[RMDB]
Record summary:
An RNA of 177 nucleotides, treated with DMS and 2A3 and read out base by base. For DMS the reverse transcriptase was MarathonRT. The DMS profile rests on 18,346 reads.
RNA sequence: GGGAACGACUCGAGUAGAGUCGAAAAUUCUAAUUGCUCUUCGCUAACUGCACUUGGCGCUUCCGUUAACAAGCAACUCGCGCUCGCUGUUUUCGGGAAGGCGAUUGUAUCACGUAAAUUCGAACGCAUUUCUAUAAUUGUUCGCAAUUAUAGAAAUAAAAGAAACAACAACAACAAC
Reactivity to DMS in 0.01 (KOAc 150mM, MgCl2 10mM, bicine 150mM(pH8.5), 24C), signal-to-noise 9, nucleotides 027 to 126: u000u000c030u010a060a080u010u010g000c030u010c070u000u000c070g020c040u000a060a090c080u000g010c060a070c130u000u000g010g020c020g010c110u000u000c040c030g010u000u000a030a050c090a060a100g020c040a060a070c080u000c160g010c080g010c050u000c100g010c040u000g000u000u000u000u000c030g020g010g010a030a060g020g010c010g000a050u010u000g020u000a100u010c100a070c070g000u000a040a050a150u000u000c070g010a060a070c130g010c120
Reactivity to 2A3 in 0.01 (KOAc 150mM, MgCl2 10mM, bicine 150mM(pH8.5), 24C), signal-to-noise 7, nucleotides 027 to 126: u040u010c010u020a040a100u080u050g010c020u020c030u150u070c040g000c070u030a060a070c040u070g010c030a040c080u030u080g080g000c060g020c070u070u010c030c000g010u020u010a050a020c060a140a040g020c010a020a060c040u040c110g050c030g020c040u040c060g030c020u020g020u040u030u030u050c030g050g000g020a040a020g040g000c000g020a010u030u080g080u070a110u120c060a030c090g040u040a040a100a180u150u110c040g030a090a020c030g000c090